[RMDB]
RNA sequence: GGGAACGACUCGAGUAGAGUCGAAAAGAUAUGGAUCCAGGGGAGCGACCAUUCGGAAACGAAUGAUCGCGAGGAUCCGGAUCCUAAGUCAAAGCUGACUACCUAUGUUCGCAUAGGUAGUCAGCAACUUGUAGUAAUGCUUCGGCAUUACUACAAGAAAAGAAACAACAACAACAAC
Reactivity to DMS in 0.01 (KOAc 150mM, MgCl2 10mM, bicine 150mM(pH8.5), 24C), signal-to-noise 4, nucleotides 027 to 126: g000a040u000a300u010g000g000a010u000c000c000a190g020g000g000g010a050g020c000g010a020c020c000a010u000u000c010g000g000a080a120a150c010g000a020a010u000g010a010u000c000g020c000g000a050g010g000a030u010c000c000g010g000a020u000c000c000u000a040a100g010u000c040a100a090a120g010c000u000g010a010c000u000a000c000c010u000a010u000g000u000u020c230g030c010a010u000a000g010g000u010a000g000u000c000a000g000c000a000a020
Reactivity to 2A3 in 0.01 (KOAc 150mM, MgCl2 10mM, bicine 150mM(pH8.5), 24C), signal-to-noise 3, nucleotides 027 to 126: g020a020u080a020u120g010g000a010u030c100c300a300g010g000g000g010a010g000c010g000a010c020c000a000u020u010c000g000g020a080a040a030c010g000a000a000u010g000a020u000c000g000c020g010a050g000g000a010u020c000c000g000g000a000u010c010c000u030a160a020g070u030c090a130a080a060g010c010u000g000a000c010u000a000c020c000u000a010u020g040u030u150c300g010c190a000u000a000g000g000u000a000g000u000c000a000g000c000a000a000